Structure probing data (DMS and 2A3) for a 177-nucleotide construct.

RNA sequence: GGGAACGACUCGAGUAGAGUCGAAAAGGCGUCUUCGCUGCCUCGGCCGCCCUGCACUGACCGGUAGCCGCCGUAAUUGCGGCAUUGUUCCCAUAAAAGGAUGUGGGUGUGGGUGCCGAAGUAGCAGGCUAUGCCUGAUGUUCGCAUCAGGCAUAGCAAAAGAAACAACAACAACAAC
Reactivity to DMS in 0.01 (KOAc 150mM, MgCl2 10mM, bicine 150mM(pH8.5), 24C), signal-to-noise 3, nucleotides 027 to 126: g020g000c140g000u010c040u000u010c150g010c000u000g000c000c010u000c020g000g010c050c070g000c070c000c020u000g030c010a020c010u000g000a070c010c060g000g000u000a120g010c000c010g020c000c190g010u000a070a130u020u010g000c000g010g000c000a130u010u010g010u010u000c020c000c010a120u000a040a070a110a120g000g000a160u000g020u000g000g010g000u000g040u000g030g010g020u000g000c000c010g000a000a020g010u000a010g020c000a090g000
Reactivity to 2A3 in 0.01 (KOAc 150mM, MgCl2 10mM, bicine 150mM(pH8.5), 24C), signal-to-noise 3, nucleotides 027 to 126: g070g030c060g110u040c070u160u110c070g010c010u000g000c000c010u000c000g000g000c050c050g060c010c020c000u030g010c000a010c020u070g110a070c000c040g080g040u050a030g010c010c010g020c010c010g040u090a080a120u130u190g000c000g000g000c000a010u010u190g010u040u030c000c010c000a020u110a010a180a020a010g120g010a090u140g010u080g160g000g030u020g000u020g010g020g010u030g020c000c010g000a000a010g010u000a010g000c010a010g090
Description
Reactivities are given for positions 27 through 126. For 2A3 the reverse transcriptase was SuperScript II with manganese. For DMS, 3,331 sequencing reads were counted. For 2A3, 3,974 sequencing reads were counted. The RNA was probed in 150 mM KOAc, 10 mM MgCl2 and 150 mM bicine (pH 8.5) at 24 C.